RNA sequence: GGGAACGACUCGAGUAGAGUCGAAAAUCAUGGAACUUACUUUAGUGAAUGGAUAAGACGUUUAGCAACUUAGCACAGUGCCUCUCACUUAUUAGGUCUUGAUAAAUAGUAUUGAAGUCAUUAUUCCUACAACUCUUCACAGUACCUGGCACUUGGAAUCGAUAGUGAGUUUCGACUCACUAUCGAUAAAAGAAACAACAACAACAAC
Reactivity to DMS in 0.01 (KOAc 150mM, MgCl2 10mM, bicine 150mM(pH8.5), 24C), signal-to-noise 3, nucleotides 027 to 156: u000c030a110u010g010g020a110a070c040u000u000a070c100u000u000u000a090g030u010g000a150a170u010g000g030a100u010a060a130g010a060c070g040u000u000u020a130g000c020a070a060c020u000u000a040g000c030a070c130a080g020u000g030c040c010u000c060u000c030a050c070u010u000a060u010u000a050g010g040u000c040u010u010g020a100u000a060a040a080u010a120g040u010a120u010u000g010a070a100g000u000c060a060u000u010a090u000u000c050c040u000a050c070a050a080c040u000c030u000u000c050a080c080a080g000u000a070c010c020u000g000g070c040a040c030u000u000g010g020a140
Reactivity to 2A3 in 0.01 (KOAc 150mM, MgCl2 10mM, bicine 150mM(pH8.5), 24C), signal-to-noise 4, nucleotides 027 to 156: u060c020a040u060g060g050a060a010c020u020u020a020c000u090u100u050a020g000u020g070a040a030u080g000g040a010u030a120a040g060a050c060g060u110u080u150a030g000c030a030a100c050u060u080a040g020c030a020c020a100g020u020g030c020c010u040c000u020c010a040c030u050u090a070u070u050a070g030g000u000c030u010u020g020a020u040a060a160a050u090a030g060u040a090u070u130g040a050a010g000u000c020a020u010u120a020u070u060c010c000u020a050c030a090a050c010u000c000u060u070c030a040c010a070g020u020a030c000c060u050g030g000c030a020c030u030u020g050g030a090
An RNA of 207 nucleotides, treated with DMS and 2A3 and read out base by base. Reactivities are rounded to 0.1 and cut off at 0 and 3. For DMS, 5,592 sequencing reads were counted. For 2A3 the reverse transcriptase was SuperScript II with manganese. The RNA was probed in 150 mM KOAc, 10 mM MgCl2 and 150 mM bicine (pH 8.5) at 24 C. DMS adducts were read by reverse transcription with MarathonRT.